The data come from the RNA Mapping Database (RMDB), library OK1LIB. Chemical mapping of a 177-nucleotide RNA with DMS and 2A3. For 2A3, 29,922 sequencing reads were counted. Values are in units of 0.01, from 0 to 300, in steps of 10. Conditions: 150 mM KOAc, 10 mM MgCl2 and 150 mM bicine (pH 8.5), 24 C. 2A3 adducts were read by reverse transcription with SuperScript II with manganese.

[RMDB]
RNA sequence: GGGAACGACUCGAGUAGAGUCGAAAAGCAACGGAACUCGAACCUUCGGACCACACGUAGUAGUGUCCGCUACUUUCGAGUAACGCGUAAGAGGUAUUCACGUAGCACUUGAGAAGUAGACCGUAUGAUCUUGACUUAAGUUCGCUUAAGUCAAGAUAAAAGAAACAACAACAACAAC
Reactivity to DMS in 0.01 (KOAc 150mM, MgCl2 10mM, bicine 150mM(pH8.5), 24C), signal-to-noise 7, nucleotides 027 to 126: g020c120a160a080c030g000g000a120a060c050u010c050g000a050a090c200c100u010u020c010g000g010a040c050c080a060c070a110c140g020u040a130g010u010a080g020u020g010u000c010c010g010c100u000a010c070u000u010u000c010g000a010g000u000a040a160c090g000c060g020u010a100a070g010a080g000g020u030a060u010u000c070a050c020g000u010a070g000c270a050c010u000u000g000a050g000a040a090g000u000a030g000a130c030c040g010u020a100u030g020
Reactivity to 2A3 in 0.01 (KOAc 150mM, MgCl2 10mM, bicine 150mM(pH8.5), 24C), signal-to-noise 9, nucleotides 027 to 126: g060c040a030a030c020g010g040a060a040c030u040c090g060a060a060c010c000u060u050c020g020g010a030c070c040a030c060a010c140g180u160a070g040u030a020g000u110g010u080c010c010g010c010u030a020c000u020u030u010c010g000a000g000u040a020a030c050g020c010g050u080a140a020g040a040g130g160u190a160u110u120c030a020c040g020u040a030g030c050a010c020u020u030g040a050g010a140a020g000u030a010g020a040c020c020g030u070a160u190g070